[RMDB]
RNA sequence: GGGAACGACUCGAGUAGAGUCGAAAAGAUAUGGAGCCGAUCAGCGCACUAUAGAAUCGGAAACGAUUCUACGAAUGACCCGCUGUUGAGGCUCCUAAGUCAAAACCUUUCCCUUCGGGGAAAGGAACCUUUAGGCUAUGUUCGCAUAGCCUAAAGGAAAAGAAACAACAACAACAAC
Reactivity to DMS in 0.01 (KOAc 150mM, MgCl2 10mM, bicine 150mM(pH8.5), 24C), signal-to-noise 3, nucleotides 027 to 126: g000a060u010a300u000g010g000a040g070c000c000g010a180u000c000a030g000c000g010c140a070c100u000a130u000a010g010a010a020u010c000g000g000a100a130a200c010g030a030u000u000c000u000a020c080g010a080a050u010g000a160c250c290c040g000c000u000g000u010u000g000a300g000g020c000u000c000c000u010a000a080g000u000c020a060a070a070a070c000c000u000u010u000c000c000c000u010u020c230g020g000g000g020a010a000a020g010g010a000a010
Reactivity to 2A3 in 0.01 (KOAc 150mM, MgCl2 10mM, bicine 150mM(pH8.5), 24C), signal-to-noise 2, nucleotides 027 to 126: g040a010u060a040u150g010g010a010g020c010c010g030a050u010c010a000g010c000g040c030a020c070u050a010u010a150g000a010a000u010c010g030g000a060a050a030c000g020a010u010u000c000u030a020c050g230a250a230u150g080a130c050c060c100g000c010u040g090u300u060g070a100g000g000c000u000c000c000u000a000a000g020u000c010a010a010a060a120c030c000u020u000u000c000c000c010u040u000c280g060g000g000g000a000a000a000g000g000a010a010

An RNA of 177 nucleotides, treated with DMS and 2A3 and read out base by base. Values cover nucleotides 27 to 126. Source: RMDB library TTRDEL, as collected in RNAgym. Conditions: 150 mM KOAc, 10 mM MgCl2 and 150 mM bicine (pH 8.5), 24 C. DMS (dimethyl sulfate) methylates the pairing face of unpaired adenines and cytosines. The DMS profile rests on 1,837 reads.